[RMDB]
RNA sequence: GGGAACGACUCGAGUAGAGUCGAAAACGCAAAUCAAAGAUCCAAACAAAAUGUAACUGCGAACAACAUCGUUCCUUUCGCUCGCAAAGCUGCUGCUGUAGCUUAAUAAGAACACCUUAACUUAGGUUCGAGCAUUCAUAAUUCGACUCCGUUAAGGCAUGAUCUAAUUGUUCGCAAUUAGAUCAUGAAAAGAAACAACAACAACAAC
Reactivity to 2A3 in 0.01 (KOAc 150mM, MgCl2 10mM, bicine 150mM(pH8.5), 24C), signal-to-noise 9, nucleotides 027 to 156: c050g010c030a020a050a080u140c050a090a090a070g090a120u080c080c060a100a100a070c060a060a140a100a060u160g040u100a080a080c080u070g000c020g040a050a020c040a020a040c010a130u040c010g010u010u010c000c000u040u110u080c070g000c040u020c030g060c040a020a050a020g000c010u020g000c020u060g030c060u130g020u030a000g000c000u070u090a060a030u090a160a060g060a040a020c040a030c060c000u020u020a030a050c020u060u100a030g020g010u070u040c010g010a010g000c020a030u120u110c040a040u110a170a050u060u020c010g000a010c010u000c020c020g020u020u030a020a000g020g000
Reactivity to DMS in 0.01 (KOAc 150mM, MgCl2 10mM, bicine 150mM(pH8.5), 24C), signal-to-noise 4, nucleotides 027 to 156: c070g010c070a070a090a070u000c060a090a090a140g020a120u010c050c030a080a120a220c070a100a080a120a090u000g040u010a040a050c060u010g020c000g030a040a030c030a170a110c040a050u000c020g040u010u000c000c020u000u010u000c090g060c030u000c020g020c060a030a100a300g020c010u000g030c000u000g030c040u000g030u000a050g020c060u000u020a030a140u000a080a140g020a080a130c120a090c010c000u010u010a020a030c010u000u000a060g000g010u010u010c020g010a070g040c100a140u000u000c170a090u010a080a170u000u020c000g010a030c010u000c050c100g030u000u000a020a040g000g010